[RMDB]
This 207-nucleotide RNA was probed chemically with DMS and 2A3.
For DMS the reverse transcriptase was MarathonRT.
The RNA was probed in 150 mM KOAc, 10 mM MgCl2 and 150 mM bicine (pH 8.5) at 24 C.
Reactivities are given for positions 27 through 156.
2A3 adducts were read by reverse transcription with SuperScript II with manganese.
It was measured as part of the RMDB library OK3TST.

RNA sequence: GGGAACGACUCGAGUAGAGUCGAAAAGAUUGCCGUCAAAACGUACUGGUUAACAUGGCUUUUAAUAUGGGCAUCGGCGGACUAAAGACUUUCGUCAAUAUGCUUAACUUCUUAAACGUUGCAGAUUAUCACGGCGCAGCUAAGGAAAUGCUUAAUAUGUGAGUCUAAUUUUCGAAUUAGACUCACAAAAAGAAACAACAACAACAAC
Reactivity to DMS in 0.01 (KOAc 150mM, MgCl2 10mM, bicine 150mM(pH8.5), 24C), signal-to-noise 2, nucleotides 027 to 156: g020a150u000u000g020c020c010g010u000c060a150a060a100a070c020g020u000a080c130u010g050g050u010u030a040a090c040a050u000g000g010c050u050u000u000u000a050a230u000a130u010g030g030g030c000a060u000c060g020g020c050g040g000a090c130u020a070a100a150g010a090c100u000u010u010c030g060u000c030a050a130u000a080u000g010c050u010u000a050a030c090u000u000c030u010u000a050a100a060c040g000u000u000g040c060a130g010a180u000u000a070u000c040a050c030g020g000c030g070c120a110g030c060u000a030a130g000g030a040a060a120u020g000c020u000u010a030a110u000a150
Reactivity to 2A3 in 0.01 (KOAc 150mM, MgCl2 10mM, bicine 150mM(pH8.5), 24C), signal-to-noise 3, nucleotides 027 to 156: g080a060u100u100g020c040c020g040u060c020a020a030a140a080c060g040u090a090c080u090g030g040u080u070a050a000c020a060u080g010g000c000u070u030u030u120a080a110u160a080u110g020g020g010c000a030u050c050g010g040c010g050g000a000c040u170a160a150a000g060a070c010u110u060u030c070g010u000c010a050a060u070a010u150g000c000u030u060a080a020c000u060u090c010u160u190a060a060a040c040g060u020u010g000c030a020g020a140u090u060a050u300c030a000c060g050g000c040g000c030a010g030c010u070a060a070g080g020a090a060a080u130g000c000u010u160a090a040u200a110